[RMDB]
RNA sequence: GGGAACGACUCGAGUAGAGUCGAAAAUGACCAUAUUGUGAGUGCCGGCUGGUCUGGGAACAUUUUUUAACAAGGCCAUAAGGCAGAUCAUUGUGGCUUUUAAAAGGCUUAGUGGCUCCCAGUUAGGGUAUCUCAUAUGAUUCGUCAUAUGAGAUACAAAAGAAACAACAACAACAAC
Reactivity to DMS in 0.01 (KOAc 150mM, MgCl2 10mM, bicine 150mM(pH8.5), 24C), signal-to-noise 9, nucleotides 027 to 126: u000g010a180c010c010a040u000a050u010u000g010u000g010a260g010u000g010c020c010g010g060c260u000g000g010u000c000u000g000g000g010a080a110c300a020u000u010u000u010u010u010a070a170c110a070a040g010g000c000c000a020u000a230a120g000g010c030a030g000a130u000c020a030u000u000g030u000g000g000c020u000u000u000u010a030a080a090a130g010g000c040u000u000a080g010u010g010g000c030u000c010c000c010a140g010u010u010a110g010g010
Reactivity to 2A3 in 0.01 (KOAc 150mM, MgCl2 10mM, bicine 150mM(pH8.5), 24C), signal-to-noise 6, nucleotides 027 to 126: u090g070a120c000c010a010u030a040u060u110g020u020g050a120g130u030g010c010c010g030g020c040u010g010g010u010c010u010g010g020g130a110a030c030a080u180u180u040u050u060u070a110a050c060a090a020g000g000c010c000a020u020a030a010g010g000c010a000g020a040u030c010a010u000u060g010u020g010g000c000u020u040u020u070a090a200a020a020g020g000c000u050u090a060g030u120g140g000c000u010c000c010c010a050g040u060u160a070g100g060